[RMDB]
RNA sequence: GGGAACGACUCGAGUAGAGUCGAAAACAUGAGAUGUCUGCUGCAGAAACUUUGGGCUCGUCUACUCAGCUAACUACUAUGAGAAACGCAACAACUGAUGAUUUUGCGAAAAUUUUUGAGGAGGGGACACCUAAAGUGCACCGACGGCUGAGGGGGAUACGAAGUUUCUAUUCGUAGAAACUUCGUAAAAAGAAACAACAACAACAAC
Reactivity to DMS in 0.01 (KOAc 150mM, MgCl2 10mM, bicine 150mM(pH8.5), 24C), signal-to-noise 2, nucleotides 027 to 156: c070a180u000g010a100g000a080u000g010u000c020u000g020c030u010g000c020a090g000a130a120a110c020u000u010u000g020g000g060c070u000c030g050u000c010u050a080c000u010c010a090g000c120u000a100a120c050u000a070c100u000a150u030g010a120g010a120a070a150c020g060c020a010a040c090a030a140c060u000g010a120u020g010a300u010u000u000u000g000c040g000a030a000a060a130u000u000u000u000u000g010a070g020g020a050g000g000g000g000a080c040a010c030c040u020a010a040a060g030u000g000c030a130c030c010g000a130c080g000g020c010u010g010a070g000g010g000g040g030a300
Reactivity to 2A3 in 0.01 (KOAc 150mM, MgCl2 10mM, bicine 150mM(pH8.5), 24C), signal-to-noise 4, nucleotides 027 to 156: c030a050u180g030a040g030a140u080g070u020c030u080g050c050u010g000c030a030g100a260a120a040c020u040u020u020g010g010g010c060u060c140g170u000c040u030a060c010u010c010a030g050c030u060a050a150c040u100a020c050u060a180u140g050a050g070a100a090a010c020g000c000a000a040c010a050a050c070u100g050a110u040g070a130u180u080u060u010g010c000g090a010a040a110a140u080u190u150u130u120g020a030g010g020a020g000g050g010g010a000c010a050c040c010u000a040a030a010g020u020g020c020a020c050c030g090a090c040g010g020c020u020g010a050g010g000g010g000g000a010

Description:
The record gives the reactivity of an RNA of 207 nucleotides to DMS and 2A3. The 2A3 profile rests on 1,761 reads. Conditions: 150 mM KOAc, 10 mM MgCl2 and 150 mM bicine (pH 8.5), 24 C.